[RMDB]
RNA sequence: GGGAACGACUCGAGUAGAGUCGAAAAGCCCAUAUGUUCGCAUAUGGGCAAAAGCAGAUCUGAGCAUCCGAGCUCUCUGCGACAAAAGUCAACGCAAUAAAAAAACACGUCACUUCGGUGACGUGAAGCUUAAAUGCUAGUUCGCUAGCAUUUAAGCAAAAGAAACAACAACAACAAC
Reactivity to 2A3 in 0.01 (KOAc 150mM, MgCl2 10mM, bicine 150mM(pH8.5), 24C), signal-to-noise 5, nucleotides 027 to 126: g000c000c000c000a000u010a000u010g020u000u060c230g000c110a000u010a000u010g000g000g000c030a050a020a000a010g000c010a000g010a040u060c110u230g010a000g000c010a020u010c070c060g070a060g010c000u010c000u010c000u010g000c000g020a020c050a000a210a020a010g100u100c040a060a080c110g030c130a080a120u240a280a120a030a010a000a010a020c000a000c000g000u000c000a010c010u040u080c230g080g000u010g010a000c000g000u000g000a000a000
Reactivity to DMS in 0.01 (KOAc 150mM, MgCl2 10mM, bicine 150mM(pH8.5), 24C), signal-to-noise 3, nucleotides 027 to 126: g010c000c000c000a010u000a010u010g010u000u010c230g030c010a000u000a000u010g010g010g030c010a010a010a060a120g010c010a010g010a080u000c180u010g010a020g030c010a120u010c060c060g010a140g000c000u000c000u000c000u000g000c010g000a080c250a030a070a060a070g010u010c080a040a100c100g000c180a070a090u030a000a000a060a080a040a090a160c000a000c000g010u000c000a010c000u000u000c200g040g000u000g000a000c010g010u000g000a010a060